Structure probing data (2A3) for a 207-nucleotide construct. For 2A3 the reverse transcriptase was SuperScript II with manganese. Reactivities are rounded to 0.1 and cut off at 0 and 3.
[RMDB]
RNA sequence: GGGAACGACUCGAGUAGAGUCGAAAAACAAAAUUUGGCUGCUUAUCAGGUGUUAUGAAGGCAAAGUAGUCGGUCCACUUGAUGAGAACCUCGCCGUUGUUCUCAUGAGAUUCUGAGUCGAUAUCCAUUAGAGUAUCAGAACGCAGAGCCUUCAGAGACCUGCAUGCAGGUUCGCCUGCAUGCAGGUAAAAGAAACAACAACAACAAC
Reactivity to 2A3 in 0.01 (KOAc 150mM, MgCl2 10mM, bicine 150mM(pH8.5), 24C), signal-to-noise 1, nucleotides 027 to 156: a000c060a010a140a170a190u120u170u090g000g060c050u030g000c000u040u010a020u080c010a010g000g000u010g030u160u060a120u100g050a000a030g060g000c010a090a100a100g150u150a030g020u100c060g000g110u030c020c040a020c050u000u020g080a030u010g010a020g010a010a020c000c050u010c030g090c120c040g010u000u000g000u010u010c000u010c030a090u090g010a030g000a050u020u020c010u080g000a000g010u010c000g020a030u010a100u080c050c040a010u080u260a050g070a040g060u060a010u000c080a070g010a080a000c010g000c050a000g010a040g080c000c030u030u100c020a010g000a000g030
Annotation:
Reactivities are given for positions 27 through 156. The reactions ran in a buffer of 150 mM KOAc, 10 mM MgCl2 and 150 mM bicine (pH 8.5), at 24 C. Source: RMDB library OK3TST, as collected in RNAgym.